[RMDB]
RNA sequence: GGGAACGACUCGAGUAGAGUCGAAAAGGGGUCUUAGGCACUAAAUGCUACCCACCGCUAUGAACUACUCCUGAAGCCUCCACGGGAGCAUAGCGAGGCAUUUAAACCUAAGACGGAGGCACCCAAAGUACUUUCCUAGUUCGCUAGGAAAGUACAACCACUGUAUCCUGUUCGCAGGAUACAGUGGAAAAGAAACAACAACAACAAC
Reactivity to 2A3 in 0.01 (KOAc 150mM, MgCl2 10mM, bicine 150mM(pH8.5), 24C), signal-to-noise 4, nucleotides 027 to 156: g090g010g010g000u010c010u000u000a000g000g010c030a010c160u040a040a020a010u010g000c000u050a130c080c070c080a040c070c000g000c010u000a010u050g030a170a130c080u190a100c000u280c000c000u010g020a050a020g010c000c000u000c000c010a040c030g000g000g000a010g010c000a000u000a000g000c000g000a010g010g000c000a000u010u020u070a300a300a300c000c000u000a000a000g000a000c000g000g000a000g000g010c000a030c000c010c010a070a130a020g000u000a010c000u010u000u000c000c000u000a000g010u030u040c190g030c160u000a000g000g000a000a000a000g000u000a000c000a000a010
Reactivity to DMS in 0.01 (KOAc 150mM, MgCl2 10mM, bicine 150mM(pH8.5), 24C), signal-to-noise 2, nucleotides 027 to 156: g000g020g000g000u000c030u000u020a000g000g020c090a140c180u000a070a030a100u000g000c010u000a050c020c030c050a300c060c050g000c000u010a020u000g010a140a110c100u000a300c010u010c000c010u000g000a060a090g010c000c000u010c040c000a300c030g030g020g000a050g000c010a070u000a000g000c000g000a120g000g010c010a030u000u010u000a010a120a020c010c010u010a010a050g000a010c040g000g030a010g010g010c000a140c020c010c010a130a110a150g020u000a000c000u010u000u010c010c000u010a020g000u000u010c270g030c000u000a020g010g000a000a010a030g000u000a000c000a120a170

Structure probing data (2A3 and DMS) for a 207-nucleotide construct. The reactions ran in a buffer of 150 mM KOAc, 10 mM MgCl2 and 150 mM bicine (pH 8.5), at 24 C. For DMS, 2,285 sequencing reads were counted.